Background:
Structure probing data (2A3) for a 207-nucleotide construct. High 2A3 reactivity points to a flexible backbone, as in loops and unpaired stretches. The reactions ran in a buffer of 150 mM KOAc, 10 mM MgCl2 and 150 mM bicine (pH 8.5), at 24 C. It was measured as part of the RMDB library OK3TST. For 2A3 the reverse transcriptase was SuperScript II with manganese.
[RMDB]
RNA sequence: GGGAACGACUCGAGUAGAGUCGAAAAGUGAAACGCGGGGUAUAUGGUGUCUCAUUCGGCACCUCCGGAUAUCGUACCCGGGGGUACGGCGUCUCGACGAUCAUUCGAAAAACACAAACUGAUGUCACAACCGCUGUCGACACGUCAACGGUCAACACCUUUAACCGUUCUUCGGAACGGUUAAAGGAAAAGAAACAACAACAACAAC
Reactivity to 2A3 in 0.01 (KOAc 150mM, MgCl2 10mM, bicine 150mM(pH8.5), 24C), signal-to-noise 1, nucleotides 027 to 156: g090u080g030a000a060a000c080g000c030g050g110g000g060u020a070u020a040u220g040g040u020g050u000c040u010c050a160u170u050c020g000g010c040a010c000c000u000c000c000g000g000a020u040a030u200c160g030u110a060c010c010c000g000g000g060g030g000u030a080c140g000g040c080g010u010c050u030c070g020a050c010g050a070u080c010a040u130u080c020g080a070a000a000a100a000c150a010c040a050a080a020c020u070g020a060u080g050u100c030a000c000a100a040c010c040g000c050u080g020u030c020g010a020c000a050c080g040u040c030a080a030c000g020g000u000c000a020a020c030a060